[RMDB]
RNA sequence: GGGAACGACUCGAGUAGAGUCGAAAAUGGUGGCGCCUGCCUGUAAUCCUAGCUACUCCAGAGGCUGAGGCAUGAGAAUCACGUCACCCCAGGAGGCAGAGGCUGCCGUGAGCUGAGAUCGCGCCACGUGGUGCGAAAUUUUCGAAUUUCGCACCACAAAAGAAACAACAACAACAAC
Reactivity to DMS in 0.01 (KOAc 150mM, MgCl2 10mM, bicine 150mM(pH8.5), 24C), signal-to-noise 2, nucleotides 027 to 126: u000g030g030u000g010g030c010g040c020c120u010g010c000c010u020g060u010a100a120u020c020c010u010a090g000c010u000a080c080u000c050c100a110g000a070g010g020c110u000g000a050g000g000c040a070u000g010a140g010a100a130u000c060a060c020g010u010c030a080c040c010c010c020a110g030g020a080g010g020c080a050g010a070g000g020c250u000g000c020c020g010u000g000a040g040c040u000g010a100g000a070u020c100g010c030g030c020c010a030c110
Reactivity to 2A3 in 0.01 (KOAc 150mM, MgCl2 10mM, bicine 150mM(pH8.5), 24C), signal-to-noise 1, nucleotides 027 to 126: u120g020g000u000g000g020c080g000c040c000u000g040c010c000u080g160u140a090a090u090c010c020u090a050g020c040u100a060c040u030c090c010a110g030a020g110g000c000u040g110a030g010g000c020a060u110g060a010g050a140a090u110c000a030c100g050u000c020a040c050c060c030c000a020g000g190a040g020g000c040a010g030a070g120g020c060u020g030c000c030g010u010g010a050g020c060u090g000a000g000a060u110c060g030c000g000c000c010a020c080